RNA sequence: GGGAACGACUCGAGUAGAGUCGAAAAUCCUAAGUCGCACUGGAGCGUCCCACUGAGAUGCAAACCUAUAUCGGAAACGAUAUAGGGACGUAUAUCUCAUGGACGCGUUGAAAGUGCGAUAUGGAAAAAGGCACACUUUUGUUCGCAAAAGUGUGCCGAAAAUGUACCGUUUCGACGGUACAUUUUCAAAAGAAACAACAACAACAAC
Reactivity to 2A3 in 0.01 (KOAc 150mM, MgCl2 10mM, bicine 150mM(pH8.5), 24C), signal-to-noise 5, nucleotides 027 to 156: u010c000c000u030a080a010g040u000c000g000c000a000c010u020g010g030a030g000c010g000u000c010c000c010a170c020u000g000a000g010a010u030g020c050a140a100a230c000c000u000a000u000a000u000c010g030g040a110a050a070c010g000a000u000a000u000a000g010g000g000a000c030g000u010a110u040a020u190c000u000c000a000u070g000g000a010c000g000c000g000u010u010g010a010a010a000g000u000g000c000g000a000u000a030u050g040g060a030a090a010a150a140g010g000c000a000c000a000c000u020u020u000u010g030u060u110c250g000c170a000a000a000a000g000u000g000u000g000c000c000
Reactivity to DMS in 0.01 (KOAc 150mM, MgCl2 10mM, bicine 150mM(pH8.5), 24C), signal-to-noise 3, nucleotides 027 to 156: u010c010c000u020a060a300g020u000c000g010c010a010c000u000g010g010a300g010c000g030u000c010c020c060a190c190u010g020a000g040a030u000g020c070a140a250a300c010c000u010a000u000a000u020c000g030g000a210a120a300c000g010a020u000a010u000a000g000g000g000a020c240g010u000a120u020a050u000c010u020c010a050u000g000g010a010c010g030c000g020u010u000g000a170a130a060g000u000g000c000g000a000u000a080u000g000g000a040a060a070a140a160g000g010c010a020c000a040c000u000u000u000u010g010u000u000c300g000c020a010a020a040a010g010u010g030u000g010c020c000
An RNA of 207 nucleotides, treated with 2A3 and DMS and read out base by base. The data come from the RNA Mapping Database (RMDB), library RNAMAK. Values cover nucleotides 27 to 156. For 2A3, 8,762 sequencing reads were counted. For DMS the reverse transcriptase was MarathonRT.